Notes:
Structure probing data (DMS and 2A3) for a 207-nucleotide construct.
[RMDB]
RNA sequence: GGGAACGACUCGAGUAGAGUCGAAAAGAGAGUCAACCUGUGAUUAACUUAAUAGCAUGUUUUACAUGAAAAGCAAUCAAAUAUUGAUGUAAGAAGAGGCUACUAGAUGACAUAUUUUCCAGUCUGUCAUAAUUGGCAAAAACAUCAGAGAAAGGAAGUGCAUAAAUUAUUUCGAUAAUUUAUGCACAAAAGAAACAACAACAACAAC
Reactivity to DMS in 0.01 (KOAc 150mM, MgCl2 10mM, bicine 150mM(pH8.5), 24C), signal-to-noise 4, nucleotides 027 to 156: g040a130g010a190g020u000c020a050a130c010c030u000g020u000g010a060u000u000a110a060c030u010u010a060a070u010a160g010c010a050u000g020u010u000u010u020a070c030a050u000g000a080a130a050a060g040c060a040a090u010c040a070a080a050u010a080u010u000g010a030u000g000u010a050a130g000a080a130g010a130g010g020c020u000a060c030u010a080g020a070u000g010a060c040a080u000a100u000u000u000u000c090c100a150g020u000c050u000g000u000c030a050u000a080a110u000u000g020g000c030a030a040a050a060a040c040a050u000c050a130g010a130g020a060a050a100g010g000a060a170
Reactivity to 2A3 in 0.01 (KOAc 150mM, MgCl2 10mM, bicine 150mM(pH8.5), 24C), signal-to-noise 8, nucleotides 027 to 156: g080a000g010a000g040u040c030a030a040c020c030u050g020u050g050a090u080u100a080a100c040u050u130a070a050u060a190g040c010a020u030g050u050u220u090u150a050c020a020u040g040a050a030a050a020g040c040a030a050u050c030a040a120a090u170a080u100u090g020a020u020g020u070a040a050g030a080a020g030a080g080g020c010u030a040c020u040a070g050a150u030g000a010c020a010u080a050u060u090u090u040c020c010a020g050u020c040u030g010u000c010a000u020a150a070u100u050g020g000c010a010a030a030a040a040c010a010u070c020a010g070a010g080a090a040a010g060g130a080a090

Annotation:
It was measured as part of the RMDB library OK3TST. The reactions ran in a buffer of 150 mM KOAc, 10 mM MgCl2 and 150 mM bicine (pH 8.5), at 24 C.